[RMDB]
RNA sequence: GGGAACGACUCGAGUAGAGUCGAAAACUUUCUCGCUGGGACUGACAGUUGCCUAACAGGGAGAGGAUCUGAAGCGCGCACGGAUCCUCAUCGAUCUGUUAGAAGCAACGUCAGUCCUGUGCUGAAGCGCGCACGGCAACCGAAAGGUGCGAAUUAACUUAUUUACAUGGUUCGCCAUGUAAAUAAGAAAAGAAACAACAACAACAAC
Reactivity to DMS in 0.01 (KOAc 150mM, MgCl2 10mM, bicine 150mM(pH8.5), 24C), signal-to-noise 2, nucleotides 027 to 156: c060u000u010u000c030u000c040g030c050u000g020g000g030a050c000u000g000a020c020a120g030u010u010g030c010c010u010a020a030c010a030g030g000g010a060g030a040g000g000a020u000c010u000g010a030a050g040c040g010c000g040c030a300c040g000g000a010u000c000c010u000c070a070u000c120g010a030u010c000u000g000u000u000a020g000a110a100g020c000a010a010c030g000u000c010a010g010u000c010c000u000g000u000g000c010u000g000a070a040g040c040g040c000g000c030a300c040g030g010c020a030a050c030c020g020a130a150a160g030g020u000g000c020g020a150a220u000u010a030a170
Reactivity to 2A3 in 0.01 (KOAc 150mM, MgCl2 10mM, bicine 150mM(pH8.5), 24C), signal-to-noise 3, nucleotides 027 to 156: c010u060u100u050c060u000c020g000c010u000g000g000g020a010c000u000g010a000c020a250g020u000u000g000c000c000u000a000a000c000a000g000g010g010a000g000a000g000g000a000u000c000u030g040a210a040g010c000g000c000g000c000a000c000g000g000a000u020c000c010u010c010a020u270c000g000a000u000c000u000g010u000u000a010g020a120a030g000c000a010a000c000g000u000c000a000g000u000c000c000u000g000u000g000c000u030g010a130a060g000c010g000c000g000c000a000c010g010g000c000a010a000c010c000g060a080a020a020g010g000u010g010c010g020a010a010u110u110a050a020